[RMDB]
RNA sequence: GGGAACGACUCGAGUAGAGUCGAAAAGCAUGCGCAGCACCUCAUGCGGCAGGAUCAGCGGCCGGCGGCUGAGUUGCCGGGAGCGCGAACGCGACGAUCCCUUCAUUCCUGACGAGCGGUUUGUCUGAUGGACGAGCAUAUUCGUAUGCUCGUCCAUAAAAGAAACAACAACAACAAC
Reactivity to DMS in 0.01 (KOAc 150mM, MgCl2 10mM, bicine 150mM(pH8.5), 24C), signal-to-noise 2, nucleotides 027 to 126: g000c090a050u000g030c000g070c040a100g010c030a130c120c010u050c060a100u000g040c070g000g010c100a050g000g000a030u040c060a100g000c020g000g000c010c010g000g000c040g000g040c020u000g050a010g010u020u000g000c080c020g000g020g000a060g000c000g000c040g020a070a110c070g020c000g000a050c140g020a110u000c000c010c000u000u000c080a110u030u010c010c000u000g010a070c130g020a080g000c030g000g030u030u020u080g000u020c010u050g000
Reactivity to 2A3 in 0.01 (KOAc 150mM, MgCl2 10mM, bicine 150mM(pH8.5), 24C), signal-to-noise 3, nucleotides 027 to 126: g080c010a050u150g020c060g010c050a070g020c020a070c010c010u060c000a050u150g090c010g020g000c000a010g050g080a150u030c010a000g030c020g080g000c010c000g000g030c000g050g000c020u050g100a110g110u070u070g000c000c000g090g010g000a030g020c010g000c000g000a110a040c060g000c000g020a040c020g040a050u030c000c020c000u010u050c060a090u050u020c010c010u050g040a070c050g000a020g050c010g000g060u030u020u120g070u000c040u050g010
Description: The record gives the reactivity of an RNA of 177 nucleotides to DMS and 2A3. The data come from the RNA Mapping Database (RMDB), library OK1LIB. The reactions ran in a buffer of 150 mM KOAc, 10 mM MgCl2 and 150 mM bicine (pH 8.5), at 24 C.